[RMDB]
RNA sequence: GGGAACGACUCGAGUAGAGUCGAAAAUGCAGGUUACUUGAUCUGAUCAGAUUCAGUGAAAGUGUCACCUCGUAGACUCUGAUUUUAGUUGCUAAUGUAAUGUGAAACCAAUGUUCUAUUCAGAUACACAGCUGUUUACUUUCGAGUAAACAGCUGUAAAAGAAACAACAACAACAAC
Reactivity to DMS in 0.01 (KOAc 150mM, MgCl2 10mM, bicine 150mM(pH8.5), 24C), signal-to-noise 2, nucleotides 027 to 126: u000g020c160a030g010g010u000u010a020c030u000u020g020a220u000c010u010g000a030u010c170a140g000a200u000u000c000a000g000u000g010a210a030a030g000u000g020u000c190a030c000c010u000c040g030u010a070g010a020c010u000c070u000g010a000u000u000u000u000a300g010u000u000g010c010u000a070a090u030g020u000a010a020u000g020u010g000a030a030a060c060c050a010a060u000g010u000u000c010u010a030u010u000c090a080g000a110u000a070c180